The record gives the reactivity of an RNA of 177 nucleotides to 2A3 and DMS. DMS adducts were read by reverse transcription with MarathonRT. Reactivities are rounded to 0.1 and cut off at 0 and 3. The 2A3 profile rests on 2,425 reads. 2A3 is a SHAPE reagent: it acylates the 2'-hydroxyl of flexible nucleotides of all four kinds.
RNA sequence: GGGAACGACUCGAGUAGAGUCGAAAAGGUCGACAGCCCGUGGUGCCCGUCCGUCACGUACAGCGCGUCGCCGUUCGGCCCGAUCACGACGGGGUUGAGCACCGAGCGAUCGCGUGCGGCGGCGCUACACCACCCUAGCUUUCGAGCUAGGGUGGUGAAAAGAAACAACAACAACAAC
Reactivity to 2A3 in 0.01 (KOAc 150mM, MgCl2 10mM, bicine 150mM(pH8.5), 24C), signal-to-noise 2, nucleotides 027 to 126: g080g030u050c020g000a010c030a020g030c000c020c050g010u060g030g040u040g030c010c030c010g020u070c010c030g010u040c030a030c080g110u150a060c060a100g030c030g020c010g070u030c010g000c000c030g000u030u020c010g050g050c000c030c080g010a030u060c070a040c130g300a070c020g060g030g000g040u110u260g090a080g050c100a050c060c030g010a030g000c040g010a010u060c020g000c000g000u020g000c000g000g010c000g000g000c000g000c000u020a010
Reactivity to DMS in 0.01 (KOAc 150mM, MgCl2 10mM, bicine 150mM(pH8.5), 24C), signal-to-noise 2, nucleotides 027 to 126: g030g010u000c020g000a120c190a170g010c010c030c050g010u030g010g030u000g030c060c030c050g000u010c030c030g030u010c020a030c140g010u000a060c210a170g010c120g000c020g020u000c020g000c010c020g040u000u010c020g030g000c150c160c010g000a030u000c010a050c090g000a170c030g000g000g020g020u000u000g010a080g000c080a110c070c000g020a210g000c020g000a010u000c030g000c070g000u000g020c020g000g010c000g010g010c020g010c030u000a030